[RMDB]
RNA sequence: GGGAACGACUCGAGUAGAGUCGAAAAGUGACCAUGGCCCAUGACACAGCCCUUAGGAGGUCCUGAGAACAUGUGUCUAAGGUGGUCGGGGUUCAGGUUGGUUUUAUACAUUUUUAGGGAGGCAUGAGACAUCAGUCAGAUACAUUUAAGAAAUACACCUGAAAAACGUAUUCGUACGUUUUUCAGGAAAAGAAACAACAACAACAAC
Reactivity to 2A3 in 0.01 (KOAc 150mM, MgCl2 10mM, bicine 150mM(pH8.5), 24C), signal-to-noise 2, nucleotides 027 to 156: g030u020g050a010c020c020a090u050g090g030c050c000c000a030u070g020a000c000a000c000a020g070c010c010c000u060u000a020g040g020a070g060g170u190c020c020u060g010a020g040a080a030c030a100u020g000u000g000u030c000u030a010a030g070g010u030g000g000u040c000g040g010g000g000u060u100c020a010g000g030u020u020g050g050u020u040u090u000a110u040a010c060a070u100u070u060u080u240a060g010g010g000a020g050g000c050a020u120g040a020g000a050c060a060u110c010a040g120u050c010a020g030a060u080a110c020a040u060u120u130a070a010g070a050a070a030u300a050c080a020
Reactivity to DMS in 0.01 (KOAc 150mM, MgCl2 10mM, bicine 150mM(pH8.5), 24C), signal-to-noise 1, nucleotides 027 to 156: g030u000g030a060c010c000a100u000g000g010c000c000c020a200u020g010a050c020a040c010a100g000c040c010c010u000u000a060g030g020a240g020g000u010c020c020u020g020a080g020a050a020c040a170u000g020u010g000u000c010u010a110a100g040g030u010g000g040u000c010g040g000g020g060u000u010c020a050g020g020u000u000g040g010u000u000u020u000a130u010a040c070a120u010u000u010u000u010a090g010g080g010a120g030g020c050a040u000g010a140g010a100c000a170u000c050a000g010u010c040a050g000a150u000a120c080a060u010u000u000a090a100g010a030a070a110u000a100c070a170

This 207-nucleotide RNA was probed chemically with 2A3 and DMS. For 2A3, 1,034 sequencing reads were counted. For DMS, 2,665 sequencing reads were counted. Source: RMDB library OK3TST, as collected in RNAgym.